This 177-nucleotide RNA was probed chemically with DMS. The reactions ran in a buffer of 150 mM KOAc, 10 mM MgCl2 and 150 mM bicine (pH 8.5), at 24 C. The data come from the RNA Mapping Database (RMDB), library OK2TRN. The DMS profile rests on 649 reads. DMS adducts were read by reverse transcription with MarathonRT.
RNA sequence: GGGAACGACUCGAGUAGAGUCGAAAAGCCCUUUAUAACAACAGCAGACUUGAACUAUUCAUGUGGGGAGAAUUACAUGCAAUUGGAAAAAAGGGCCAAGCUACCUCUUGGAUGGUUAAGGGAUUGGCUGGCCCUUAAGUUUCGACUUAAGGGCCAGAAAAGAAACAACAACAACAAC
Reactivity to DMS in 0.01 (KOAc 150mM, MgCl2 10mM, bicine 150mM(pH8.5), 24C), signal-to-noise 1, nucleotides 027 to 126: g020c000c000c000u020u010u020a080u000a130a100c070a060a120c140a090g000c060a070g030a130c050u000u000g030a100a090c020u000a090u020u000c030a040u000g010u000g000g000g000g050a200g000a110a130u020u010a130c140a060u000g010c100a130a070u030u050g000g000a060a040a060a010a150a120g050g000g000c030c000a090a050g060c080u010a080c090c040u010c010u000u000g020g010a090u010g000g010u000u000a050a020g010g000g010a080u010u030g010g020